RNA sequence: GGGAACGACUCGAGUAGAGUCGAAAAAUUAGUACAUGCGCAUGCUGAUCGGCCGCGACGCCAGUGCUGCAAUUGCAACACUGAUGUUAGUGCAUCGGCAUAUCAUGCGCAUGACCGUGGCACGUCAGUAUAUCAACACUAGUUAUGUACGCAUGUGUAUUGCUAUAUCGUUCGCGAUAUAGCAAUAAAAAGAAACAACAACAACAAC
Reactivity to 2A3 in 0.01 (KOAc 150mM, MgCl2 10mM, bicine 150mM(pH8.5), 24C), signal-to-noise 8, nucleotides 027 to 156: a000u190u170a050g050u060a050c000a000u000g000c000g010c000a010u030g000c100u070g050a130u130c080g060g010c030c020g010c060g020a010c020g010c000c010a010g000u000g000c010u010g000c030a060a300u280u300g000c000a010a000c000a000c010u020g020a050u070g050u070u100a160g010u060g160c040a070u110c000g020g000c000a020u030a030u110c020a000u010g000c000g000c000a000u000g000a000c010c000g030u080g040g000c020a010c090g020u050c030a050g010u010a020u010a020u100c110a050a060c040a060c190u090a070g030u100u020a030u080g030u040a010c030g020c060a030u080g020u010g030
Reactivity to DMS in 0.01 (KOAc 150mM, MgCl2 10mM, bicine 150mM(pH8.5), 24C), signal-to-noise 3, nucleotides 027 to 156: a140u000u000a090g020u000a140c010a010u000g000c020g010c040a060u000g010c060u000g000a050u000c060g030g020c050c010g020c050g010a040c010g010c000c010a010g020u000g020c010u010g030c010a300a200u000u000g040c000a030a000c030a010c000u000g010a060u000g010u000u000a110g030u010g000c030a070u000c000g010g020c020a090u000a060u010c080a050u010g020c000g020c000a020u000g000a030c030c000g030u010g000g000c010a060c070g020u000c030a160g020u000a060u020a090u000c110a040a060c000a150c090u000a150g010u000u010a070u000g030u000a040c030g010c060a040u000g010u010g030
About this RNA
Chemical mapping of a 207-nucleotide RNA with 2A3 and DMS. DMS adducts were read by reverse transcription with MarathonRT. The DMS profile rests on 10,199 reads. Source: RMDB library OK3TST, as collected in RNAgym.